[RMDB]
RNA sequence: GGGAACGACUCGAGUAGAGUCGAAAAGCACGGUGGUGGGUGCCUGUAAUCCCAGCUACUCGGGAGGCUGAGGCAGGUGAAUCGCUUGAACCCAGGAGGCGGAGUUUGCAGUGAGCCGAGAUCUCACGACUACGGCAUUUUUCGAAAUGCCGUAGUCAAAAGAAACAACAACAACAAC
Reactivity to DMS in 0.01 (KOAc 150mM, MgCl2 10mM, bicine 150mM(pH8.5), 24C), signal-to-noise 1, nucleotides 027 to 126: g010c040a030c110g010g000u000g030g030u000g010g030g010u000g010c030c020u010g030u010a120a090u000c010c010c010a120g000c030u000a040c060u010c100g010g010g030a120g000g000c060u000g010a080g010g040c020a030g030g030u020g000a050a060u000c120g000c010u010u000g000a060a080c030c020c030a100g000g000a110g000g000c020g010g000a070g000u000u020u030g020c070a040g010u000g010a070g000c010c020g010a110g010a030u000c030u000c020a130c160